[RMDB]
RNA sequence: GGGAACGACUCGAGUAGAGUCGAAAAGCAGAAACAGAGAUGCCGACCUUCACAGAUCAGCAGCUUCAGGAGGAGCUUUCUCAUGUCAGGUGCCAAAAAUGCCAGAAGUUGUGCGCGGACCUGCUGCCAAGUGACAUGCUUUCGAGCAUGUCACUUGAAAAGAAACAACAACAACAAC
Reactivity to DMS in 0.01 (KOAc 150mM, MgCl2 10mM, bicine 150mM(pH8.5), 24C), signal-to-noise 2, nucleotides 027 to 126: g020c040a090g020a180a110a070c100a110g000a040g000a060u010g010c020c030g010a080c040c030u020u000c180a120c160a080g010a050u010c010a030g030c040a010g000c000u000u000c080a140g000g000a090g040g010a120g000c040u010u010u000c020u000c030a080u000g010u000c060a040g010g010u010g010c040c050a000a100a020a060a050u010g010c030c030a120g010a120a100g020u010u000g010u000g020c050g020c060g010g000a090c110c010u010g000c040u000g000c070